[RMDB]
RNA sequence: GGGAACGACUCGAGUAGAGUCGAAAAGGGGAGCUGAUCAGUAUUCUCCUCUUGAUUUCACGUUACUUGAUCCUCAUUUAGGGACGAUUAACGACUGGAGAGGAACAAUCGAAGAAAUGCAUAGUAAAGGCAUGUAUGUAAUUGUGGAUCUCACCGACCAGUAGUCCUAGUUCGCUAGGACUACUGGAAAAGAAACAACAACAACAAC
Reactivity to 2A3 in 0.01 (KOAc 150mM, MgCl2 10mM, bicine 150mM(pH8.5), 24C), signal-to-noise 5, nucleotides 027 to 156: g020g020g000g010a020g000c050u080g060a160u160c060a070g110u130a170u150u010c010u000c000c010u000c000u010u030g050a060u010u100u140c040a030c020g010u020u020a020c020u020u070g130a220u150c000c000u060c060a300u100u050u190a110g010g000g050a030c010g030a050u070u050a100a040c040g060a120c080u080g050g020a030g000a000g050g010a040a040c020a020a060u100c130g070a050a020g050a080a190a000u030g000c010a040u070a120g110u210a160a140a040g060g000c010a010u030g030u090a050u070g040u040a010a100u050u210g000u040g040g040a040u040c030u010c040a070c070c010g030a050
Reactivity to DMS in 0.01 (KOAc 150mM, MgCl2 10mM, bicine 150mM(pH8.5), 24C), signal-to-noise 2, nucleotides 027 to 156: g020g000g030g010a010g000c180u020g000a100u000c060a220g000u000a180u000u000c010u000c000c010u000c000u000u000g000a120u000u010u010c050a200c030g000u000u000a030c170u000u000g000a150u020c010c030u010c100a170u000u000u000a090g010g000g020a080c030g000a050u000u000a030a070c050g000a090c080u000g000g020a050g010a050g010g010a100a100c020a030a070u010c060g040a090a130g000a100a120a050u020g030c010a080u000a280g000u010a060a100a120g010g040c050a030u000g010u010a050u000g020u000a080a100u000u000g020u010g000g020a100u000c030u000c010a140c040c000g020a190